[RMDB]
RNA sequence: GGGAACGACUCGAGUAGAGUCGAAAACAGGUACUCGUCGAUCACGCCGGACAGCGGCCGACGAUCCUCGUCUCGACAGCGCCACCGGCCGUCCACGUGUUCGAGACCACCGCCGUCGAUGAGGUGGCAGUCAGACAAGCUUCGGCUUGUCUGACUGAAAAGAAACAACAACAACAAC
Reactivity to 2A3 in 0.01 (KOAc 150mM, MgCl2 10mM, bicine 150mM(pH8.5), 24C), signal-to-noise 2, nucleotides 027 to 126: c070a020g030g000u110a130c040u020c060g040u020c040g030a050u080c060a020c100g060c080c160g000g110a110c030a090g090c020g030g020c020c010g100a100c060g000a010u140c030c020u050c050g050u000c010u020c040g070a040c050a050g000c020g010c060c020a070c040c030g010g000c010c010g020u080c010c000a020c030g010u050g030u060u050c030g000a020g020a000c010c000a010c010c020g050c010c030g130u120c050g060a130u110g030a020g060g000u000g010g050
Reactivity to DMS in 0.01 (KOAc 150mM, MgCl2 10mM, bicine 150mM(pH8.5), 24C), signal-to-noise 2, nucleotides 027 to 126: c150a110g010g010u000a080c120u010c010g000u000c060g010a040u020c070a070c060g050c070c070g000g020a110c150a150g020c020g010g000c040c020g020a050c010g010a060u000c040c030u000c090g000u000c040u030c050g000a060c090a090g010c030g000c050c010a110c060c020g000g030c060c040g000u000c010c050a110c130g010u000g000u000u000c030g000a080g000a100c000c020a030c000c030g010c040c050g010u010c090g010a110u010g010a110g010g020u010g000g020